[RMDB]
RNA sequence: GGGAACGACUCGAGUAGAGUCGAAAACAGAGCUGAUGGGCCAUGUACCUAUCCAAAAUGAGAUCCCAUCUUGCACACUGUGCUAAUAUGAGAUUCUCAUGCCUCCUACUUGGAGAGAUCUGGACUACUAACUGUAUGACGUUCGCGUCAUACAGAAGUUCGGAUACGUCUUCGGACGUAUCCGAACAAAAGAAACAACAACAACAAC
Reactivity to 2A3 in 0.01 (KOAc 150mM, MgCl2 10mM, bicine 150mM(pH8.5), 24C), signal-to-noise 1, nucleotides 027 to 156: c000a010g110a000g040c100u090g010a010u010g070g000g000c090c040a120u270g040u150a150c000c000u060a030u230c010c080a020a120a050a070u040g010a010g000a000u000c000c000c000a000u000c080u050u000g020c000a000c020a030c120u160g020u000g000c100u210a060a030u070a030u050g030a030g000a030u300u000c000u020c000a010u110g070c000c010u030c000c000u120a240c100u150u280g000g000a010g000a000g000a010u000c040u120g040g000a020c020u000a020c010u100a270a170c000u000g000u010a000u000g000a000c010g030u000u040c230g010c020g100u060c000a000u000a010c010a040g000a000a000